[RMDB]
RNA sequence: GGGAACGACUCGAGUAGAGUCGAAAAGAAGCGGCGAAAAAUGCGUGUAAAUAAAAGGUCAAUAAGACCUGACAGUGAUACCAAAUUAAAUGGGUCGAAGUCUCGCCAAAAUACGCAACAAAUAGAAGUUGAAUGACAAUUUCGAUUGUCAUUCAACAAAAGAAACAACAACAACAAC
Reactivity to DMS in 0.01 (KOAc 150mM, MgCl2 10mM, bicine 150mM(pH8.5), 24C), signal-to-noise 2, nucleotides 027 to 126: g010a080a100g030c140g020g020c000g000a020a040a080a090a020u010g000c000g020u000g000u010a100a070a100u010a030a040a080a010g000g000u000c000a110a120u000a150a180g010a010c000c000u000g020a020c010a030g030u020g010a050u000a080c000c010a030a160a140u050u010a020a140a100u000g000g000g020u000c000g000a100a130g000u000c000u000c030g000c020c000a030a050a060a020u000a000c000g000c010a110a090c230a010a070a070u000a140g000a080a080
Reactivity to 2A3 in 0.01 (KOAc 150mM, MgCl2 10mM, bicine 150mM(pH8.5), 24C), signal-to-noise 2, nucleotides 027 to 126: g090a030a000g070c060g020g000c000g050a120a000a020a070a000u100g000c030g010u040g040u070a030a050a080u110a030a110a050a000g030g000u000c030a100a070u130a300a020g000a010c000c000u010g010a010c010a010g110u090g140a000u150a300c000c000a030a060a050u130u160a070a140a110u110g010g000g000u000c010g010a050a000g000u000c010u020c000g000c000c000a100a100a030a000u070a000c000g000c020a000a070c030a080a150a060u190a020g100a160a020